Chemical mapping of a 177-nucleotide RNA with DMS and 2A3. Conditions: 150 mM KOAc, 10 mM MgCl2 and 150 mM bicine (pH 8.5), 24 C. For 2A3, 4,223 sequencing reads were counted. Reactivities are given for positions 27 through 126. The data come from the RNA Mapping Database (RMDB), library M2PK50.
RNA sequence: GGGAACGACUCGAGUAGAGUCGAAAACUACAUAAAUUCGUUUAUGUAGCAUCGGGGACGCGCAGACUCCCCGUCAGUCGGCUCUAGCCUUCCAAGCUCUGCACUCAACAGCUUUCGAGCUGUUGAAACCAGAUUGUCUUUUCGAAGACAAUCUGGUAAAAGAAACAACAACAACAAC
Reactivity to DMS in 0.01 (KOAc 150mM, MgCl2 10mM, bicine 150mM(pH8.5), 24C), signal-to-noise 3, nucleotides 027 to 126: c000u000a010c000a010u000a000a020a060u000u020c180g020u000u000u000a000u000g010u010a000g010c100a140u000c010g000g000g000g000a020c160g010c140g000c020a010g010a060c070u000c000c010c010c000g010u000c130a040g010u010c160g000g000c000u000c110u010a130g010c010c010u000u000c050c200a020a050g020c050u000c000u000g020c020a190c220u000c000a000a000c000a000g010c000u010u000u010c190g020a020g000c000u010g000u000u000g010a000a100
Reactivity to 2A3 in 0.01 (KOAc 150mM, MgCl2 10mM, bicine 150mM(pH8.5), 24C), signal-to-noise 3, nucleotides 027 to 126: c000u020a000c000a020u030a000a020a010u080u070c100g060u040u020u010a010u000g010u010a010g010c040a130u170c020g020g000g000g000a010c100g120c020g000c250a000g010a040c010u000c000c000c000c000g020u020c000a000g020u000c000g020g000c030u040c130u230a080g030c000c000u060u000c040c070a020a010g010c050u000c000u000g010c010a010c040u010c000a000a010c000a000g030c000u070u060u200c210g130a010g000c000u000g000u010u000g000a020a010